[RMDB]
About this RNA
Chemical mapping of a 177-nucleotide RNA with DMS and 2A3. The RNA was probed in 150 mM KOAc, 10 mM MgCl2 and 150 mM bicine (pH 8.5) at 24 C. DMS adducts were read by reverse transcription with MarathonRT. Reactivities are given for positions 27 through 126. For 2A3 the reverse transcriptase was SuperScript II with manganese.

RNA sequence: GGGAACGACUCGAGUAGAGUCGAAAAGAUAUGGAAUGUUUCCACCAUCGAUCGUACAGAGAACUCGGAAACGAGACUGUACGGGAGGUGAAACAUUCCUAAGUCAAAAGGCGUCUUCGGACGCCAACGUAAUUGAGCUGUUCGCAGCUCAAUUACGAAAAGAAACAACAACAACAAC
Reactivity to DMS in 0.01 (KOAc 150mM, MgCl2 10mM, bicine 150mM(pH8.5), 24C), signal-to-noise 2, nucleotides 027 to 126: g000a010u000a160u000g010g000a010a020u010g030u000u000u000c120c070a030c020c000a300u020c240g000a030u000c010g010u000a000c010a030g010a300g030a050a080c020u000c000g010g010a030a020a080c000g000a040g000a150c040u000g000u000a000c000g010g000g020a000g020g010u000g010a050a000a020c000a000u000u000c000c000u000a000a020g000u000c000a090a060a080a120g010g020c000g000u040c000u000u010c200g020g020a030c000g010c000c000a010a000
Reactivity to 2A3 in 0.01 (KOAc 150mM, MgCl2 10mM, bicine 150mM(pH8.5), 24C), signal-to-noise 2, nucleotides 027 to 126: g010a000u000a000u060g000g010a000a010u000g020u000u040u020c270c070a030c020c000a170u300c000g030a020u010c000g010u010a000c010a000g040a020g050a300a300c030u000c000g010g010a010a010a000c010g010a010g020a070c020u000g000u010a010c000g020g000g020a040g010g010u000g030a000a010a010c000a000u000u000c000c000u000a020a000g000u000c010a000a000a080a230g000g000c010g000u000c000u040u160c300g130g000a000c000g000c020c000a000a000